[RMDB]
RNA sequence: GGGAACGACUCGAGUAGAGUCGAAAAGCCAGACUUCGGUCUGGCAAAUAUUUGUACCAGAUGCUCCUUUUUCUGUAUUGUCAGAAAGAGCAUCCUGUGCAAAAGAAAACCCACGGUUCGCCGUGGGCGUACCAAAGAACUUCGGUUCUUUGGUACGAAAAGAAACAACAACAACAAC
Reactivity to DMS in 0.01 (KOAc 150mM, MgCl2 10mM, bicine 150mM(pH8.5), 24C), signal-to-noise 2, nucleotides 027 to 126: g000c000c000a020g010a040c000u000u010c160g010g030u000c000u000g030g010c000a010a010a040u000a080u000u000u000g010u010a010c030c070a060g010a000u000g000c000u040c040c250u010u010u010u000u000c000u020g030u000a190u000u030g010u000c010a000g000a000a120a110g000a000g010c000a000u000c010c060u000g010u000g020c000a000a000a010a160g010a110a070a100a130c000c010c000a020c000g010g000u000u020c260g030c010c010g000u000g020g010g020
Reactivity to 2A3 in 0.01 (KOAc 150mM, MgCl2 10mM, bicine 150mM(pH8.5), 24C), signal-to-noise 2, nucleotides 027 to 126: g000c010c000a000g000a000c000u080u150c300g080g000u000c000u000g020g000c000a010a000a010u010a010u000u000u000g000u000a010c000c040a010g000a020u000g000c010u050c000c060u050u160u060u140u000c030u020g080u110a300u300u200g150u180c000a010g000a000a000a000g000a000g000c000a000u010c000c000u010g000u000g000c000a020a000a010a080g110a020a080a010a030c000c010c000a000c000g010g050u070u070c220g020c070c000g000u010g010g000g000
The record gives the reactivity of an RNA of 177 nucleotides to DMS and 2A3.
Conditions: 150 mM KOAc, 10 mM MgCl2 and 150 mM bicine (pH 8.5), 24 C.
DMS adducts were read by reverse transcription with MarathonRT.
It was measured as part of the RMDB library RFMREP.